[RMDB]
RNA sequence: GGGAACGACUCGAGUAGAGUCGAAAAGAUAUGGACGGAUCUAUUUGGAGCUCAGAUUCGGAAACGAAUCAGAAGAGCGCGAAACAAAUAGAGUCCGUCCUAAGUCAAAGUGAGGUUCGCCUCACAACAUUUUACCUCACUUCGGUGAGGUAAAAUGAAAAGAAACAACAACAACAAC
Reactivity to 2A3 in 0.01 (KOAc 150mM, MgCl2 10mM, bicine 150mM(pH8.5), 24C), signal-to-noise 1, nucleotides 027 to 126: g020a020u120a030u100g010g020a010c020g000g010a010u010c000u000a010u020u050u010g120g030a110g030c030u030c040a000g000a000u010u000c000g000g010a000a000a000c010g000a020a010u010c040a070g280a300a100g010a080g010c010g000c020g280a080a160a070c020a010a020a000u000a010g020a060g040u020c010c020g010u000c000c000u000a000a000g000u010c020a040a120a050g020u000g000a020g040g050u040u140c290g110c060c020u000c000a000c000a000a000
Reactivity to DMS in 0.01 (KOAc 150mM, MgCl2 10mM, bicine 150mM(pH8.5), 24C), signal-to-noise 3, nucleotides 027 to 126: g000a040u010a300u000g010g000a010c000g000g000a280u000c000u000a020u000u000u000g000g000a140g030c010u000c010a120g000a000u000u010c000g020g000a110a090a250c010g020a010a000u000c000a110g010a140a180g010a010g010c000g030c140g000a160a170a200c010a000a010a000u000a000g000a070g000u000c000c010g010u000c010c000u010a000a110g010u000c020a100a110a140g010u000g000a040g010g000u000u000c300g010c010c020u000c010a010c040a130a180
This 177-nucleotide RNA was probed chemically with 2A3 and DMS. For 2A3, 2,687 sequencing reads were counted. The RNA was probed in 150 mM KOAc, 10 mM MgCl2 and 150 mM bicine (pH 8.5) at 24 C. For DMS the reverse transcriptase was MarathonRT.